This 177-nucleotide RNA was probed chemically with 2A3 and DMS.
It was measured as part of the RMDB libraries RFM100 and RFMREP.

[RMDB]
RNA sequence: GGGAACGACUCGAGUAGAGUCGAAAAGACAGGGCGGACAAAGGUGCGCAGGCAACUCGUCAGGCGAUCGACGUUAAUGAAGCAAAUCCAUAAUUGCCAAUGAUGAGCAAUUCGCUAUUGCCGCCUACCGAAUAUGCAUCUUCGGAUGCAUAUUCGGAAAAGAAACAACAACAACAAC
Reactivity to 2A3 in 0.01 (KOAc 150mM, MgCl2 10mM, bicine 150mM(pH8.5), 24C), signal-to-noise 4, nucleotides 027 to 126: g170a020c060a140g000g030g000c020g000g000a090c030a030a060a030g140g030u110g000c020g000c060a010g020g000c020a070a020c030u000c010g000u010c030a010g040g000c000g070a050u020c050g080a100c040g020u090u130a150a080u290g050a110a020g080c020a070a080a070u070c010c020a010u050a160a040u060u030g000c000c000a060a180u100g030a060u030g000a020g000c020a020a070u120u030c010g000c020u060a060u060u010g000c000c020g000c000c000u020a020
Reactivity to DMS in 0.01 (KOAc 150mM, MgCl2 10mM, bicine 150mM(pH8.5), 24C), signal-to-noise 2, nucleotides 027 to 126: g020a100c180a080g010g000g000c010g000g040a110c060a050a050a180g020g020u000g000c000g040c130a110g000g020c170a120a070c060u010c010g000u000c000a110g000g020c020g000a010u000c080g000a060c190g010u010u060a010a120u010g020a100a100g000c090a070a060a070u010c060c040a110u000a040a020u000u020g000c000c000a120a160u020g000a080u020g000a120g000c060a050a090u030u000c070g000c010u060a070u020u000g020c010c030g000c000c000u010a040
For 2A3 the reverse transcriptase was SuperScript II with manganese. Reactivities are given for positions 27 through 126.